Structure probing data (2A3 and DMS) for a 177-nucleotide construct. It was measured as part of the RMDB library OK2TST. For DMS the reverse transcriptase was MarathonRT.
RNA sequence: GGGAACGACUCGAGUAGAGUCGAAAAGUCUAAAUUAGGCAGGUCAGAUAUUAGGUUUAUUAAAUGCUUUAAGGUCAUGAACUGUUUUGACUUUUGAAAAUUGUUCAAUUUACCUACCUUGAAGACACGGACCUUGUAAAUUCGUUUACAAGGUCCGAAAAGAAACAACAACAACAAC
Reactivity to 2A3 in 0.01 (KOAc 150mM, MgCl2 10mM, bicine 150mM(pH8.5), 24C), signal-to-noise 1, nucleotides 027 to 126: g030u000c010u080a000a130a240u160u080a090g050g000c020a010g060g010u010c020a000g060a050u060a070u040u020a050g090g020u030u140u060a090u020u130a190a110a130u140g010c010u090u150u040a000a010g010g030u030c020a170u060g020a060a040c010u020g020u000u010u080u020g050a040c000u170u060u050u110g000a000a000a140a150u070u110g040u100u090c020a010a100u000u010u220a070c010c020u010a020c000c000u000u000g030a060a090g040a060c000a020
Reactivity to DMS in 0.01 (KOAc 150mM, MgCl2 10mM, bicine 150mM(pH8.5), 24C), signal-to-noise 1, nucleotides 027 to 126: g000u000c020u000a040a150a180u010u020a070g000g000c010a040g020g000u010c130a060g010a060u000a060u000u000a020g000g000u000u000u000a160u060u010a090a090a060u000g000c010u000u010u000a020a020g000g020u000c160a100u010g000a040a060c040u010g020u000u010u000u000g030a060c150u000u000u000u020g020a050a030a010a070u000u000g010u000u000c060a050a080u000u000u000a110c080c020u010a050c050c030u000u010g000a090a030g010a040c140a160